[RMDB]
RNA sequence: GGGAACGACUCGAGUAGAGUCGAAAAGAUAUGGAGGGAUAUGGUUACCGUACGGUAGGGAGAAGUGAGUCGGAAACGACUUUAUCUUCGACGAUCUACGUACGGUAACCAUAUCCCUCCUAAGUCAGAACAUGAAAUUCUUCGGAAUUUCAUGUUCAAAAGAAACAACAACAACAAC
Reactivity to DMS in 0.01 (KOAc 150mM, MgCl2 10mM, bicine 150mM(pH8.5), 24C), signal-to-noise 2, nucleotides 027 to 126: g010a050u000a300u010g010g010a010g010g000g030a020u010a000u000g000g000u000u000a000c000c040g010u000a010c030g000g020u030a010g000g010g010a050g020a020a020g060u010g000a010g000u000c020g020g000a130a150a250c010g010a020c000u000u000u010a090u040c010u010u020c020g000a030c270g000a020u020c010u000a010c000g030u000a000c000g000g000u000a010a010c000c000a000u000a000u000c000c000c000u010c020c000u000a000a020g010u000c050a190
The data come from the RNA Mapping Database (RMDB), library TTRINS. This 177-nucleotide RNA was probed chemically with DMS. For DMS the reverse transcriptase was MarathonRT.